[RMDB]
RNA sequence: GGGAACGACUCGAGUAGAGUCGAAAAUUCACAGGAUUUUGUUCCUGUCUCUGUUUUACAGAUGCUGAAGAUUAGACAUGUAAAGUGAUUUGCCUUAGGUCCCACAGCUAGGGAAUAGCAGAGUUAGAAGAGAUCUAGUGUUCGCACUAGAUCUCUUAAAAGAAACAACAACAACAAC
Reactivity to DMS in 0.01 (KOAc 150mM, MgCl2 10mM, bicine 150mM(pH8.5), 24C), signal-to-noise 2, nucleotides 027 to 126: u000u010c090a100c040a040g010g010a020u010u010u000u010g010u000u000c000c000u010g020u000c030u000c010u010g010u000u000u000u020a110c040a040g010a090u010g010c030u010g020a220a100g010a130u010u010a040g020a040c090a060u000g000u010a060a060a060g010u000g000a140u000u000u000g010c000c050u010u000a080g000g000u000c010c030c040a100c060a050g040c020u000a200g010g010g000a070a090u000a050g010c020a060g000a060g000u000u000a110g010
Reactivity to 2A3 in 0.01 (KOAc 150mM, MgCl2 10mM, bicine 150mM(pH8.5), 24C), signal-to-noise 1, nucleotides 027 to 126: u060u040c010a010c000a010g070g020a050u110u120u160u300g090u140u010c010c010u000g020u030c000u000c000u000g060u000u030u040u120a040c010a010g080a120u100g070c030u020g050a100a010g010a120u200u270a060g010a060c040a050u020g010u050a010a080a120g040u040g070a170u050u060u090g060c020c000u010u070a050g030g020u020c040c010c010a050c000a020g000c010u020a010g020g000g040a090a040u030a050g020c040a010g020a040g040u020u080a030g010